[RMDB]
The record gives the reactivity of an RNA of 177 nucleotides to DMS and 2A3. Reactivities are given for positions 27 through 126. For DMS, 11,416 sequencing reads were counted. DMS adducts were read by reverse transcription with MarathonRT.

RNA sequence: GGGAACGACUCGAGUAGAGUCGAAAAAUUAUAGUAGACAUGUUGAAGAAUAUGAACUUAGUUUUAUUUUCCAACUUUGUAUUGUAAAACUUGAUCCUGAAGUACUGGCUCACAUAAACACUAUGAAACCAGUUAUGAUAUUCGUAUCAUAACUGGUAAAAGAAACAACAACAACAAC
Reactivity to DMS in 0.01 (KOAc 150mM, MgCl2 10mM, bicine 150mM(pH8.5), 24C), signal-to-noise 5, nucleotides 027 to 126: a070u010u010a020u040a020g010u000a050g020a190c030a020u010g000u010u000g000a100a040g000a020a020u000a020u030g010a050a030c020u020u030a120g000u000u000u000u000a030u020u010u000u000c030c000a020a050c080u000u010u010g010u000a090u010u020g000u000a020a020a080a110c100u000u010g010a080u010c020c000u000g010a080a090g000u010a060c050u000g010g000c020u000c040a030c070a040u010a070a030a050c100a050c080u010a050u010g000a080a090
Reactivity to 2A3 in 0.01 (KOAc 150mM, MgCl2 10mM, bicine 150mM(pH8.5), 24C), signal-to-noise 9, nucleotides 027 to 126: a000u130u070a060u080a070g050u040a020g040a100c020a050u040g020u020u060g070a190a070g040a080a040u080a040u140g020a040a020c020u100u040a090g060u040u020u010u020a050u010u040u040u000c040c010a030a050c050u090u130u120g070u050a080u070u070g070u060a010a040a040a040c030u030u080g020a030u090c000c000u040g070a070a000g030u050a050c030u030g040g000c010u020c010a020c000a010u080a070a140a010c040a020c050u060a060u150g080a110a030

Conditions: 150 mM KOAc, 10 mM MgCl2 and 150 mM bicine (pH 8.5), 24 C.
It was measured as part of the RMDB library OK1LIB.
For 2A3, 11,970 sequencing reads were counted.